The record gives the reactivity of an RNA of 307 nucleotides to DMS and 2A3. The RNA was probed in 150 mM KOAc, 10 mM MgCl2 and 150 mM bicine (pH 8.5) at 24 C. For DMS the reverse transcriptase was MarathonRT. For 2A3, 2,257 sequencing reads were counted.
RNA sequence: GGGAACGACUCGAGUAGAGUCGAAAAGAGCGUGGAUAUCUGGCUCCGAGUGCUUGCCAAGCCCCAGAACACAGCUGAGGUUCAGAAGGUCCAGCUCACUGGAGAGCCAGUGCCCAUGGCCCGCUGCGUCUCCACAGGGGGUCGCCCGCCAGCCCAAAUCACCUGGCACUCAGACCUGGGCGGGAUGCCCAAUACGAGCCAGGUGCCAGGGUUCCUGUCUGGCACAGUCACUGUCACCAGCCUCUGGAUAUUGGUGCCCUCAAGCCAAUCUCGGCUUCGGCCGAGAUAAAAGAAACAACAACAACAAC
Reactivity to DMS in 0.01 (KOAc 150mM, MgCl2 10mM, bicine 150mM(pH8.5), 24C), signal-to-noise 2, nucleotides 027 to 266: g010a130g020c090g030u010g000g000a090u020a060u010c000u000g010g000c020u000c020c050g010a050g010u000g010c280u000u010g010c030c030a300a300g000c010c010c050c050a210g010a060a030c020a100c080a130g010c210u020g000a090g020g010u000u010c000a110g000a280a220g000g000u020c260c300a240g000c030u000c020a010c000u000g000g000a110g000a030g000c000c000a010g020u020g010c170c000c030a040u000g000g000c000c040c040g010c060u010g000c050g000u020c010u020c050c100a260c040a110g000g030g000g010g000u000c040g000c030c070c130g000c080c080a130g030c040c000c020a040a130a130u030c000a040c030c030u000g000g000c020a110c080u000c010a060g000a120c300c100u000g010g010g000c010g020g050g010a100u020g020c030c000c010a040a060u030a140c190g020a020g010c050c030a030g000g010u000g000c000c010a180g000g010g000u000u000c120c050u000g010u010c030u010g000g000c210a010c050a090g000u020c090a050c100u000g000u000c030a080c090c030a060g000c130c040u010c030u010g010g010a140u000a080u010u000g010g000u000g010c020c040c000u030c100a070a180g000c110c090a140
Reactivity to 2A3 in 0.01 (KOAc 150mM, MgCl2 10mM, bicine 150mM(pH8.5), 24C), signal-to-noise 3, nucleotides 027 to 266: g020a020g020c030g030u130g000g030a080u070a020u300c010u010g020g000c000u020c020c000g040a010g010u050g000c130u200u150g020c030c000a080a010g010c000c000c010c040a040g040a140a060c130a020c030a090g170c110u170g090a150g100g060u050u060c040a040g080a190a040g190g010u050c050c010a000g000c010u030c030a020c020u070g070g050a190g000a010g300c000c000a010g010u000g030c010c000c020a040u050g070g020c010c020c030g110c060u030g010c050g040u070c030u050c070c020a090c030a050g060g050g000g000g040u020c010g030c010c000c000g050c030c020a020g010c000c000c000a070a120a030u040c000a010c000c000u000g020g000c060a050c160u110c020a030g040a060c000c050u010g000g010g000c040g010g190g040a090u300g030c000c000c040a030a020u150a050c040g000a010g010c000c010a000g000g000u000g000c000c020a020g010g010g000u050u080c000c020u050g050u060c020u030g040g040c000a020c010a050g100u230c060a040c180u070g020u050c000a030c080c000a040g040c020c000u070c030u100g040g010a040u070a140u190u190g020g030u080g030c000c010c040u090c040a090a060g090c020c030a050